[RMDB]
This 207-nucleotide RNA was probed chemically with 2A3 and DMS. It was measured as part of the RMDB library M2RFPK.

RNA sequence: GGGAACGACUCGAGUAGAGUCGAAAAGUCUGUGCGUUUCCAUUUGAGUAUCCUGAAAACGGGCUUUUCAGCAUGGAACGUACAUAUUAAAUAGUAGGAGUGCAUAGUGGCCCAUAUAGCAGGCAUUGAGGCGAGGAUUGUUUCGACAAUCCUCGAACUUGACGUACCUAUUCGUAGGUACGUCAAGAAAAGAAACAACAACAACAAC
Reactivity to 2A3 in 0.01 (KOAc 150mM, MgCl2 10mM, bicine 150mM(pH8.5), 24C), signal-to-noise 2, nucleotides 027 to 156: g050u030c030u050g000u000g010c010g000u000u220u020c010c000a010u020u020u030g020a020g040u080a120u120c010c020u040g100a070a000a020a080c110g010g020g000c040u010u040u070u070c060a060g030c040a020u000g010g010a000a000c010g000u000a000c000a000u020a000u000u100a050a080a070u120a010g060u020a010g000g020a030g010u050g020c050a060u020a120g030u060g030g020c000c010c020a010u040a000u020a060g070c020a020g010g030c000a020u030u160g080a020g020g090c030g000a000g010g000a000u000u000g020u070u070u070c140g050a040c000a000a000u000c000c000u000c000g000a010a000
Reactivity to DMS in 0.01 (KOAc 150mM, MgCl2 10mM, bicine 150mM(pH8.5), 24C), signal-to-noise 1, nucleotides 027 to 156: g010u000c050u020g020u000g010c010g020u000u000u010c000c020a160u000u000u000g010a190g040u000a070u000c070c030u000g020a050a020a060a170c070g020g020g040c090u000u000u000u000c020a140g020c050a010u020g010g010a080a030c020g020u000a020c000a020u000a060u000u000a030a060a110u000a140g000u010a080g010g000a060g040u000g000c020a080u000a110g010u010g000g000c000c010c010a080u000a040u000a060g030c010a120g010g010c000a060u000u000g000a100g010g020c000g030a040g070g010a050u020u000g000u000u000u020c220g020a090c020a000a010u000c030c000u010c010g000a020a080
For DMS, 2,992 sequencing reads were counted. 2A3 adducts were read by reverse transcription with SuperScript II with manganese.